Source information: The record gives the reactivity of an RNA of 177 nucleotides to 2A3 and DMS. For DMS, 18,898 sequencing reads were counted. For 2A3, 29,960 sequencing reads were counted. Reactivities are given for positions 27 through 126.
[RMDB]
RNA sequence: GGGAACGACUCGAGUAGAGUCGAAAAAGUACCACGGCUGCCCGAUCGGUGUCUGAGGCGCCAGUACCGAACCGAGAGGGUGUUGCAGCCCACUGCAUAACCUCCGAAGCCAACACACCAGCAGCAAUCAAGUCAUGCGCUUCGGUGCAUGGCUUGAAAAAGAAACAACAACAACAAC
Reactivity to 2A3 in 0.01 (KOAc 150mM, MgCl2 10mM, bicine 150mM(pH8.5), 24C), signal-to-noise 9, nucleotides 027 to 126: a000g090u070a050c010c010a040c040g040g000c010u040g010c010c010c010g050a070u060c030g010g010u040g100u020c070u080g070a100g090g000c030g030c030c010a000g020u040a080c020c040g030a050a020c020c010g030a040g010a010g100g020g030u060g080u090u060g000c010a020g010c010c020c000a160c020u020g000c010a040u030a110a070c000c000u000c010c020g020a050a010g030c010c010a050a020c030a010c010a020c040c030a010g030c010a010g010c010a020a090
Reactivity to DMS in 0.01 (KOAc 150mM, MgCl2 10mM, bicine 150mM(pH8.5), 24C), signal-to-noise 7, nucleotides 027 to 126: a050g010u010a130c010c000a090c120g020g000c020u010g010c010c040c040g010a100u010c020g010g010u010g000u030c080u000g010a170g020g000c040g020c050c040a060g020u020a070c050c060g010a100a070c070c030g010a080g010a160g000g000g010u020g020u010u010g010c040a080g000c070c040c140a060c050u000g000c010a020u020a100a080c020c010u010c000c020g000a110a100g000c020c030a070a080c100a080c060a090c050c030a070g000c070a040g000c110a080a110